[RMDB]
RNA sequence: GGGAACGACUCGAGUAGAGUCGAAAACACUCAUCAGGAUGGGAAAGCAUGCGCGUACGGAAACCAUCCCUAAGUCUACAAUCUAACGUACAAGUUGAGCAUGCGAAAGGAUGGAAUAACCGUACGGAAACCAUCCGUUGGUACCGUACGGAAACCAGAUUCUUCCCCCAUUCGUGGGGGAAGAAUCAAAAGAAACAACAACAACAAC
Reactivity to 2A3 in 0.01 (KOAc 150mM, MgCl2 10mM, bicine 150mM(pH8.5), 24C), signal-to-noise 1, nucleotides 027 to 156: c130a000c000u170c020a060u010c060a030g030g030a070u140g020g070g040a000a210a000g050c050a050u130g040c070g010c000g000u000a020c000g100g030a100a000a000c020c000a010u050c000c000c000u110a160a000g180u050c000u160a090c130a000a220u120c010u100a140a000c000g030u020a020c010a170a030g120u060u170g050a050g000c000a000u000g020c020g000a120a160a000g150g050a030u110g000g120a100a120u300a140a000c000c000g030u030a030c020g000g000a010a010a010c000c000a020u110c000c030g020u000u040g000g000u000a000c000c000g000u000a020c070g040g000a030a000a060c110c020a020